[RMDB]
RNA sequence: GGGAACGACUCGAGUAGAGUCGAAAAUUCAUGUUCGCAUGAAAACCACGCGUACUACUCUGAGGCUUAGGGAGAGCCGCCCUCCCAAAUAGGAGUAACAAGCUCUUUGAUCUAAGCUACCCACCAGAGUAUCGCAUUUCUUCGGUUUCGACCGAAAUAUUCUAAUCUGUUUCGACAGAUUAGAAUAAAAAGAAACAACAACAACAAC
Reactivity to DMS in 0.01 (KOAc 150mM, MgCl2 10mM, bicine 150mM(pH8.5), 24C), signal-to-noise 3, nucleotides 027 to 156: u000u000c010a010u010g010u000u000c290g080c040a050u000g010a030a040a100a110c030c020a100c170g030c040g040u000a080c050u000a000c000u010c000u010g000a110g010g000c010u000u000a040g010g010g010a040g000a040g000c030c030g010c290c190c000u000c000c000c000a040a100a130u000a070g000g010a070g010u010a060a110c080a090a080g000c000u000c010u000u000u010g010a070u010c020u000a030a020g010c010u000a020c010c010c010a300c130c000a030g000a030g020u010a010u010c020g010c010a300u000u000u000c080u000u000c010g030g020u000u010u000c260g030a070c000c000g000a030a070a190
Reactivity to 2A3 in 0.01 (KOAc 150mM, MgCl2 10mM, bicine 150mM(pH8.5), 24C), signal-to-noise 4, nucleotides 027 to 156: u030u010c010a010u010g030u060u110c250g020c150a010u010g010a020a030a040a060c050c020a100c100g000c010g040u080a150c050u010a000c000u020c000u010g030a020g010g000c000u000u010a000g010g010g020a020g010a000g000c000c020g020c000c000c000u030c000c030c000a090a120a090u220a080g000g010a000g020u090a130a160c120a070a040g010c000u000c000u130u160u100g090a120u040c000u000a000a000g000c000u030a060c070c040c010a060c010c010a020g000a000g030u000a020u180c010g000c000a020u060u090u030c060u020u010c010g000g040u050u080u150c200g070a030c000c010g000a030a030a020
Structure probing data (DMS and 2A3) for a 207-nucleotide construct.
The DMS profile rests on 5,896 reads.
DMS adducts were read by reverse transcription with MarathonRT.
The data come from the RNA Mapping Database (RMDB), library RNAMAK.
The RNA was probed in 150 mM KOAc, 10 mM MgCl2 and 150 mM bicine (pH 8.5) at 24 C.